Description
An RNA of 207 nucleotides, treated with DMS and 2A3 and read out base by base. The 2A3 profile rests on 9,367 reads. The reactions ran in a buffer of 150 mM KOAc, 10 mM MgCl2 and 150 mM bicine (pH 8.5), at 24 C. For DMS the reverse transcriptase was MarathonRT. Reactivities are rounded to 0.1 and cut off at 0 and 3.
[RMDB]
RNA sequence: GGGAACGACUCGAGUAGAGUCGAAAAAGUUAGGUUCGCUAUGGUGCAACUCUUUAAGGCAAUAACGAACUAAUUCUAAUCAAGUAAUGGAGAAAUGCCAGGGUCACUAUCUAGCCAUAAUAGUGCUGUAAGUGACUUAGAUUCGUCUAAGUCACAACGUAUAUCUUAACUUCGGUUAAGAUAUACGAAAAGAAACAACAACAACAAC
Reactivity to DMS in 0.01 (KOAc 150mM, MgCl2 10mM, bicine 150mM(pH8.5), 24C), signal-to-noise 4, nucleotides 027 to 156: a080g020u000u000a040g020g010u000u000c030g030c020u000a020u010g010g000u000g010c020a080a100c080u000c100u010u000u010a100a090g010g010c020a130a040u000a040a050c030g000a040a070c010u000a040a080u000u000c040u000a080a120u000c060a070a110g020u010a070a100u000g000g010a100g010a090a080a090u010g000c000c040a100g020g020g000u000c030a060c040u010a050u000c050u000a110g030c030c050a090u000a050a110u000a090g000u000g020c020u000g020u000a070a140g010u010g010a030c000u000u000a010g010a070u000u010c300g030u000c000u000a000a030g030u010c000a000c000a030a080
Reactivity to 2A3 in 0.01 (KOAc 150mM, MgCl2 10mM, bicine 150mM(pH8.5), 24C), signal-to-noise 9, nucleotides 027 to 156: a000g080u080u060a060g010g070u020u030c020g000c030u030a020u050g080g040u060g060c060a110a120c070u090c070u140u230u220a100a060g040g000c020a070a070u080a120a050c050g030a020a010c030u030a010a030u110u050c030u090a080a070u110c060a060a050g080u100a080a120u110g070g010a050g050a090a080a020u070g010c020c010a030g020g000g000u040c010a000c020u020a040u120c020u030a020g010c000c000a020u040a130a050u040a100g080u040g050c070u060g050u100a170a080g000u000g000a000c000u000u000a000g000a000u010u040c140g030u000c120u000a010a000g000u000c000a000c000a000a000